[RMDB]
Annotation
Structure probing data (DMS and 2A3) for a 177-nucleotide construct.
RNA sequence: GGGAACGACUCGAGUAGAGUCGAAAAGUUGUGAGGCAGCGUCGUCUACGACGUUCCACAAUGAAGCGGUCGCCAGGCUUUGGAAGUACGUGGACGAUGUAGAGUCUGGACGACAUGAGCAGGCAUGGGUUUAAGCAUGGUUCGCCAUGUUUGAGUCAAAAGAAACAACAACAACAAC
Reactivity to DMS in 0.01 (KOAc 150mM, MgCl2 10mM, bicine 150mM(pH8.5), 24C), signal-to-noise 9, nucleotides 027 to 126: g010u000u000g010u000g010a070g010g010c090a130g000c010g000u000c000g010u010c060u010a040c020g020a050c070g010u000u000c010c000a070c190a070a060u030g000a110a080g010c000g000g000u010c050g010c040c040a070g000g000c030u000u000u000g000g010a060a030g010u020a060c050g010u010g000g010a030c020g000a050u010g010u010a050g010a070g000u000c010u000g000g010a080c030g000a050c030a040u020g000a100g010c040a060g000g000c050a050u010g000
Reactivity to 2A3 in 0.01 (KOAc 150mM, MgCl2 10mM, bicine 150mM(pH8.5), 24C), signal-to-noise 5, nucleotides 027 to 126: g010u010u010g010u010g020a090g010g000c030a010g000c000g000u010c000g000u010c030u050a040c020g010a000c030g050u020u000c000c000a010c020a010a080u150g040a060a010g050c010g010g030u030c010g010c020c010a020g020g000c000u030u020u040g010g020a020a010g030u070a020c010g010u020g010g020a020c000g000a020u030g000u010a010g010a000g010u000c000u000g000g020a020c000g000a000c010a040u050g020a010g000c010a000g030g000c010a010u060g020
The 2A3 profile rests on 18,091 reads.